Structure probing data (2A3 and DMS) for a 170-nucleotide construct. Conditions: 150 mM KOAc, 10 mM MgCl2 and 150 mM bicine (pH 8.5), 24 C. 2A3 adducts were read by reverse transcription with SuperScript II with manganese.
[RMDB]
RNA sequence: GGGAACGACUCGAGUAGAGUCGAAAAAUUCCGAGGGGACCGUCCCCUCGGUAAUGGCGAAUGGGACCCAGAAAUCUCUCUAGAUUCCGAUAGAGAAUCGAGAGAAAACUGGCUCUCCCUUAGCCAUGAGCAUGAUUCUUCGGAAUCAUGAAAAGAAACAACAACAACAAC
Reactivity to 2A3 in 0.01 (KOAc 150mM, MgCl2 10mM, bicine 150mM(pH8.5), 24C), signal-to-noise 9, nucleotides 027 to 129: a010u170u020c000c000g000a010g010g020g000g020a060c040c060g300u300c020c000c000c000u000c010g010g000u000a010a010u000g000g000c000g020a040a020u030g000g000g000a010c030c010c000a000g010a030a300a010u000c020u000c000u010c020u050a080g000a010u010u010c000c020g180a210u150a200g210a040g000a050a000u000c010g000a000g000a000g000a010a000a000a010c000u000g000g000c010u010c000u000c010c000c000u000u010a000g000c000c000a000u030g010a020g030
Reactivity to DMS in 0.01 (KOAc 150mM, MgCl2 10mM, bicine 150mM(pH8.5), 24C), signal-to-noise 9, nucleotides 027 to 129: a080u020u010c030c000g020a030g000g000g000g000a260c180c210g040u100c010c010c000c000u020c000g000g000u020a020a010u000g000g000c000g000a130a070u020g000g000g000a000c180c010c010a020g010a050a160a120u000c010u000c000u010c020u040a100g000a000u010u020c000c000g030a180u080a120g020a160g020a000a000u000c010g010a010g000a000g000a010a000a050a120c020u000g000g000c010u030c060u000c010c010c030u010u000a190g020c000c000a000u020g000a100g000
The DMS profile rests on 96,923 reads. For DMS the reverse transcriptase was MarathonRT. The data come from the RNA Mapping Database (RMDB), library 15KLIB.